[RMDB]
RNA sequence: GGGAACGACUCGAGUAGAGUCGAAAAGCGGCAUCGACGCCACCGCCACCGGGGAGCACAACGGUGUCUACCGGCGCACUCGGGUCUGGCAGCCGCGUGGUCAUGAAUUCCAAGCCGAUUCCGGUGGCAUACCACUCGACUUCGGUCGAGUGGUAUGAAAAGAAACAACAACAACAAC
Reactivity to 2A3 in 0.01 (KOAc 150mM, MgCl2 10mM, bicine 150mM(pH8.5), 24C), signal-to-noise 8, nucleotides 027 to 126: g030c010g010g000c010a070u100c100g070a050c070g030c020c010a100c020c020g010c020c010a020c010c000g000g010g010g050a150g050c030a030c030a180a210c080g070g000u020g060u040c030u090a080c000c010g020g000c050g010c040a020c030u030c000g040g000g040u050c060u070g020g000c010a020g010c000c000g000c040g010u030g020g020u070c070a130u110g120a080a100u140u020c040c020a060a010g050c030c030g050a070u130u040c010c010g000g000u010g010g000
Reactivity to DMS in 0.01 (KOAc 150mM, MgCl2 10mM, bicine 150mM(pH8.5), 24C), signal-to-noise 4, nucleotides 027 to 126: g020c060g000g000c020a100u020c080g020a080c090g020c010c010a070c060c020g010c120c050a080c010c010g000g000g000g000a210g000c020a070c090a150a180c090g010g000u000g010u030c080u030a080c060c030g000g010c190g020c060a090c050u010c050g030g000g010u000c070u000g000g010c080a100g000c030c020g010c030g000u010g020g020u020c100a110u020g010a100a110u000u010c050c010a120a120g010c020c050g000a130u010u010c040c010g010g000u000g000g000